RNA sequence: GGGAACGACUCGAGUAGAGUCGAAAACGGAGAUUCGGGACAACCGCAGCAUCAAUGGCACCUUCGUCAACGGCGCCCGGGUCGACGCGGCGCUGCUGCACGACGGCGACGUCGUGACCAUCGGCAAGUGGAACCACAUGUUCGCAUGUGGUUCCACAAAAGAAACAACAACAACAAC
Reactivity to DMS in 0.01 (KOAc 150mM, MgCl2 10mM, bicine 150mM(pH8.5), 24C), signal-to-noise 1, nucleotides 027 to 126: c070g020g010a170g000a120u000u000c060g000g000g020a120c070a120a110c130c020g000c090a060g050c070a040u010c120a050a090u000g000g000c040a060c070c060u000u000c050g030u010c100a020a060c100g010g010c080g040c010c030c040g010g000g000u000c060g000a070c000g030c130g000g010c040g010c010u000g000c000u000g000c040a000c050g010a010c060g020g020c230g020a110c030g000u000c010g070u000g010a120c040c020a030u000c090g040g000c060a100a050
Reactivity to 2A3 in 0.01 (KOAc 150mM, MgCl2 10mM, bicine 150mM(pH8.5), 24C), signal-to-noise 1, nucleotides 027 to 126: c050g050g010a100g000a050u030u020c020g010g080g010a080c030a060a080c080c070g000c040a050g000c010a030u110c020a030a280u140g000g000c020a030c050c130u060u080c000g020u000c010a040a050c030g020g030c000g080c000c000c070g000g030g030u040c040g000a060c030g040c040g020g030c010g000c000u060g010c010u010g000c030a010c020g110a050c000g030g000c010g010a040c000g020u010c000g030u020g010a080c000c000a080u050c020g070g000c000a120a030